Structure probing data (DMS and 2A3) for a 177-nucleotide construct. 2A3 is a SHAPE reagent: it acylates the 2'-hydroxyl of flexible nucleotides of all four kinds. The reactions ran in a buffer of 150 mM KOAc, 10 mM MgCl2 and 150 mM bicine (pH 8.5), at 24 C.

RNA sequence: GGGAACGACUCGAGUAGAGUCGAAAAGGACUUAGGUUCGCCUAAGUCCAAAUAACGUCUACAAGUACGGUAGACGAAGAUAACGUACAGUACAGAAGAACAAAAGGAGAGACUUCGGUCUCUCCAACUCCACGUAAGAGUUCGCUCUUACGUGGAGAAAAGAAACAACAACAACAAC
Reactivity to DMS in 0.01 (KOAc 150mM, MgCl2 10mM, bicine 150mM(pH8.5), 24C), signal-to-noise 1, nucleotides 027 to 126: g030g000a000c000u030u000a000g000g010u010u000c250g050c000c000u000a000a010g020u000c000c000a020a040a030u000a130a100c030g050u000c010u020a020c010a050a100g010u000a010c000g000g000u000a020g010a000c030g000a040a030g010a120u000a150a080c130g000u030a200c160a040g000u000a000c020a240g020a160a080g030a100a070c170a040a140a120a090g000g000a030g010a080g000a000c000u000u030c110g030g000u000c000u020c000u000c000c000a020a010
Reactivity to 2A3 in 0.01 (KOAc 150mM, MgCl2 10mM, bicine 150mM(pH8.5), 24C), signal-to-noise 1, nucleotides 027 to 126: g000g000a000c010u000u010a000g000g020u060u060c210g120c050c000u000a000a000g000u000c010c000a000a000a000u000a000a030c010g010u010c010u010a020c040a000a180g100u020a000c040g010g000u000a020g000a000c010g010a040a000g080a020u190a050a110c130g080u080a080c110a100g000u030a000c000a030g140a160a010g030a300a040c030a060a080a000a060g030g010a000g000a000g000a000c020u030u050c210g080g020u000c000u000c000u000c010c010a000a000

Reactivities are given for positions 27 through 126.